[RMDB]
RNA sequence: GGGAACGACUCGAGUAGAGUCGAAAAUAUAGCGCCGUAGCCGGCAUAUUAGCUAUAUAGCAUGCUAGCAUUAAUCGAUGCAUCGAUGCUAAUCGCGCGUACGGCCGGCGCAUUAGCAUGCCGCGUACUAAUCGAUGUAAUUCGUUACAUCGAUUAGAAAAGAAACAACAACAACAAC
Reactivity to DMS in 0.01 (KOAc 150mM, MgCl2 10mM, bicine 150mM(pH8.5), 24C), signal-to-noise 9, nucleotides 027 to 126: u000a070u000a180g020c010g030c030c020g020u010a120g020c040c010g020g020c070a090u000a040u010u000a120g010c010u000a080u000a110u000a060g010c020a020u000g010c050u000a140g010c030a030u000u000a100a130u010c190g010a030u000g020c030a090u010c150g000a060u000g000c010u000a010a040u000c230g010c070g010c130g010u010a110c040g010g010c010c010g000g000c000g020c010a030u000u000a040g010c070a050u000g010c020c070g010c140g020u010a180
Reactivity to 2A3 in 0.01 (KOAc 150mM, MgCl2 10mM, bicine 150mM(pH8.5), 24C), signal-to-noise 9, nucleotides 027 to 126: u140a010u030a030g010c010g000c010c010g030u040a040g000c010c010g040g100c100a020u080a090u130u180a020g000c000u010a010u010a010u030a170g000c010a000u040g050c030u060a060g000c010a020u040u130a190a260u270c190g020a010u030g000c010a030u050c060g120a010u030g000c000u010a020a010u020c030g000c010g000c030g070u090a160c020g030g000c010c000g000g000c000g000c000a010u030u030a000g000c020a020u080g050c010c030g070c040g040u030a070

An RNA of 177 nucleotides, treated with DMS and 2A3 and read out base by base. DMS adducts were read by reverse transcription with MarathonRT. For 2A3 the reverse transcriptase was SuperScript II with manganese.